Chemical mapping of a 177-nucleotide RNA with DMS and 2A3. For DMS the reverse transcriptase was MarathonRT. The reactions ran in a buffer of 150 mM KOAc, 10 mM MgCl2 and 150 mM bicine (pH 8.5), at 24 C.
RNA sequence: GGGAACGACUCGAGUAGAGUCGAAAAAUGCGAAACGUGUUAUUACACCAUUAUCACCGAUUUCGAUUUUUGCAGCACGUAACCCCUGGGAAGGAUUAGAAGCGGAUACGUUUGAAGAUGUCGCAAAUACGCGUUAUGACUUCGGUCAUAACGCGUAAAAAGAAACAACAACAACAAC
Reactivity to DMS in 0.01 (KOAc 150mM, MgCl2 10mM, bicine 150mM(pH8.5), 24C), signal-to-noise 1, nucleotides 027 to 126: a000u040g010c050g020a000a010a050c110g000u000g000u000u000a090u000u000a020c120a040c210c090a170u000u000a020u000c050a120c050c050g000a050u020u040u000c000g020a030u000u000u000u000u000g050c050a060g000c040a000c100g000u000a080a060c100c000c050c000u000g000g000g020a130a040g030g040a070u000u000a120g010a090a020g010c070g000g000a160u020a050c110g000u000u000u000g020a070a180g000a040u030g000u000c000g040c020a090a080a240
Reactivity to 2A3 in 0.01 (KOAc 150mM, MgCl2 10mM, bicine 150mM(pH8.5), 24C), signal-to-noise 1, nucleotides 027 to 126: a000u160g020c000g060a020a030a030c080g000u030g110u300u000a210u000u180a130c090a000c130c130a140u220u090a000u130c000a000c060c080g130a180u000u000u000c080g000a000u090u080u000u050u140g000c040a020g060c000a000c150g000u030a030a070c000c000c000c000u060g000g000g010a000a060g000g040a000u010u300a070g150a160a060g000c040g070g000a000u140a130c000g000u030u250u100g110a100a040g120a070u010g190u000c000g000c020a060a000a000